Source information
Chemical mapping of a 177-nucleotide RNA with DMS. The RNA was probed in 150 mM KOAc, 10 mM MgCl2 and 150 mM bicine (pH 8.5) at 24 C.
[RMDB]
RNA sequence: GGGAACGACUCGAGUAGAGUCGAAAAGAUAUGGAGGUCGACUCAAUGAUGGUUCAGGAUACAAGUGUAGACUUCGGAAACGAAGUCUACACUUUAAGCUGAACUUGAGAGUCAGACCUCCUAAGUCCUUCACCCUUAUCUUCGGAUAAGGGUGAAGAAAAGAAACAACAACAACAAC
Reactivity to DMS in 0.01 (KOAc 150mM, MgCl2 10mM, bicine 150mM(pH8.5), 24C), signal-to-noise 1, nucleotides 027 to 126: g000a060u000a200u000g000g010a050g050g000u000c000g010a040c000u000c010a230a230u010g020a200u000g000g000u000u000c000a020g000g020a090u000a090c300a000a020g030u010g000u000a010g000a000c000u000u010c000g020g000a120a050a270c000g010a050a000g010u000c000u000a010c000a000c000u000u000u000a030a270g040c010u010g000a000a010c010u000u000g030a080g020a000g010u000c010a070g010a010c000c000u000c000c000u000a000a070g080u000c020

Background:
Reactivities are given for positions 27 through 126.